RNA sequence: GGGAACGACUCGAGUAGAGUCGAAAACGUGUUAGUCGAAGUGGUCUGGAACGGCCUGUCGUAGAGGGUGAGAGUCCCGUAGACGAAAACAUGGUGACUGUCGUGACGGACACCCGAGUAGCAGCGGAGUGGUUAUCCUUUUCGAAGGAUAACCACUAAAAGAAACAACAACAACAAC
Reactivity to 2A3 in 0.01 (KOAc 150mM, MgCl2 10mM, bicine 150mM(pH8.5), 24C), signal-to-noise 4, nucleotides 027 to 126: c020g010u020g020u030u020a140g080u020c000g020a050a000g040u060g120g210u020c000u020g000g050a030a010c020g010g030c010c060u050g010u000c010g020u060a040g040a100g110g000g000u020g000a040g000a010g110u050c000c000c000g010u030a050g000a020c030g000a060a030a000a020c060a050u160g050g040u140g050a030c020u020g020u080c010g030u030g020a040c000g000g000a010c000a030c000c010c000g010a020g070u010a000g000c040a010g120c030g030g060
Reactivity to DMS in 0.01 (KOAc 150mM, MgCl2 10mM, bicine 150mM(pH8.5), 24C), signal-to-noise 4, nucleotides 027 to 126: c000g010u000g000u010u000a060g020u000c000g010a110a150g000u020g010g020u000c000u010g020g000a260a030c010g000g000c010c090u000g000u000c010g000u020a120g040a260g000g000g020u000g010a190g030a280g010u010c000c000c010g020u020a110g020a150c160g020a040a040a070a030c100a060u020g000g020u020g000a050c030u010g000u000c010g010u000g000a140c080g000g000a080c020a060c020c060c000g000a040g000u000a020g010c040a060g000c060g010g010